[RMDB]
RNA sequence: GGGAACGACUCGAGUAGAGUCGAAAAGUGUGAAGAAGAACCUGCCAUUUGUCAUGGCCCUGGGAUUGACAGCUGUGAGGGUAGUAGACCCUAUUAAUGUGGUAGGACUACUGUUACUCACAAGGAGUGUGCGGAAUGUAUUCGUACAUUCCGCACAAAAAGAAACAACAACAACAAC
Reactivity to DMS in 0.01 (KOAc 150mM, MgCl2 10mM, bicine 150mM(pH8.5), 24C), signal-to-noise 2, nucleotides 027 to 126: g010u020g010u020g020a240a060g020a110a080g020a120a120c050c020u000g010c020c030a060u000u000u000g010u010c040a140u000g000g020c030c030c020u000g030g000g010a130u020u010g000a040c040a030g040c200u020g010u000g010a010g000g000g000u000a000g000u000a010g000a150c090c010c000u000a010u000u000a090a130u010g020u010g010g000u000a000g000g000a280c010u000a000c000u010g010u010u000a180c010u000c000a020c020a060a130g000g020a130g010
Reactivity to 2A3 in 0.01 (KOAc 150mM, MgCl2 10mM, bicine 150mM(pH8.5), 24C), signal-to-noise 2, nucleotides 027 to 126: g100u070g000u000g120a060a140g050a010a050g050a110a070c000c010u030g000c030c010a090u050u010u080g040u060c020a050u020g030g020c000c010c030u020g050g040g080a080u020u160g020a060c020a030g020c040u010g040u000g030a000g000g000g000u020a000g020u000a000g050a130c080c010c000u000a010u000u150a180a280u270g120u240g050g020u000a020g000g050a000c020u030a000c000u000g060u060u060a300c000u020c020a010c000a000a010g050g060a070g100